Chemical mapping of a 177-nucleotide RNA with DMS and 2A3.
The reactions ran in a buffer of 150 mM KOAc, 10 mM MgCl2 and 150 mM bicine (pH 8.5), at 24 C.
High 2A3 reactivity points to a flexible backbone, as in loops and unpaired stretches.
Values cover nucleotides 27 to 126.

RNA sequence: GGGAACGACUCGAGUAGAGUCGAAAAGAGUGCCCUAUUCGGAGCACUGCAGUUCCCGAUAGAAAGGCUAAGCACCUCGCAAUGAUAAGGUGGGACUUUUCCUUCUGGAACCAAGCGGUUGGUUCCGCAAUCUGGUACACUUCGGUGUACCAGAUUGAAAAGAAACAACAACAACAAC
Reactivity to DMS in 0.01 (KOAc 150mM, MgCl2 10mM, bicine 150mM(pH8.5), 24C), signal-to-noise 3, nucleotides 027 to 126: g020a020g010u000g010c000c000c010u020a170u010u010c180g010g000a100g010c000a010c000u010g010c080a160g010u000u000c000c000c010g010a070u000a050g000a040a050a030g000g010c070u000a110a110g010c070a040c010c010u000c080g000c100a140a090u010g010a130u010a070a040g010g030u010g000g000g010a110c010u000u010u000u000c010c080u000u000c060u000g020g020a010a000c000c020a020a040g030c240g000g000u000u000g010g010u000u000c000c000g010
Reactivity to 2A3 in 0.01 (KOAc 150mM, MgCl2 10mM, bicine 150mM(pH8.5), 24C), signal-to-noise 3, nucleotides 027 to 126: g070a000g020u040g000c020c010c010u120a290u140u300c150g010g000a130g010c000a000c020u100g050c020a000g000u010u030c000c000c010g000a030u040a040g080a010a020a010g050g000c070u050a050a070g090c010a060c040c000u020c030g030c130a130a300u220g070a120u170a140a050g040g000u010g010g000g050a060c010u010u020u010u030c010c020u060u050c110u100g020g000a000a000c000c000a040a020g090c090g190g120u060u010g010g000u000u000c000c000g000